[RMDB]
RNA sequence: GGGAACGACUCGAGUAGAGUCGAAAAACUGUCAUCUGGGCUGGAGAGCAGUGGUACAGUUGUCUUCAUCUCGUGGGCUCAAGUGAUCCUUCUGCUUCAGCCUCCCCAGUAGCUGGGACUACAGGCACAGCUGAUGUCGGUUCGCCGACAUCAGCUGAAAAGAAACAACAACAACAAC
Reactivity to 2A3 in 0.01 (KOAc 150mM, MgCl2 10mM, bicine 150mM(pH8.5), 24C), signal-to-noise 2, nucleotides 027 to 126: a000c050u040g030u060c010a120u040c110u080g000g070g000c000u020g040g030a190g010a010g090c020a000g020u050g030g030u110a090c040a070g070u050u020g030u030c010u040u070c070a160u090c090u070c120g060u070g010g030g000c010u020c070a040a070g100u040g090a090u030c000c000u080u230c020u040g000c000u010u020c000a020g000c000c000u000c010c000c000c000a010g050u090a000g020c060u070g060g050g070a080c020u040a030c070a030g060g000c030a010
Reactivity to DMS in 0.01 (KOAc 150mM, MgCl2 10mM, bicine 150mM(pH8.5), 24C), signal-to-noise 2, nucleotides 027 to 126: a070c050u000g010u000c050a060u000c100u000g020g000g010c020u000g030g010a090g010a130g000c060a030g010u000g020g020u000a140c070a000g010u000u000g000u000c100u000u000c060a120u010c130u010c120g020u010g020g000g000c040u000c070a030a040g020u000g010a210u000c030c010u010u010c060u000g000c010u000u000c040a030g000c030c010u000c050c000c020c020a090g010u010a060g020c040u000g000g000g010a150c100u010a040c080a110g020g020c130a170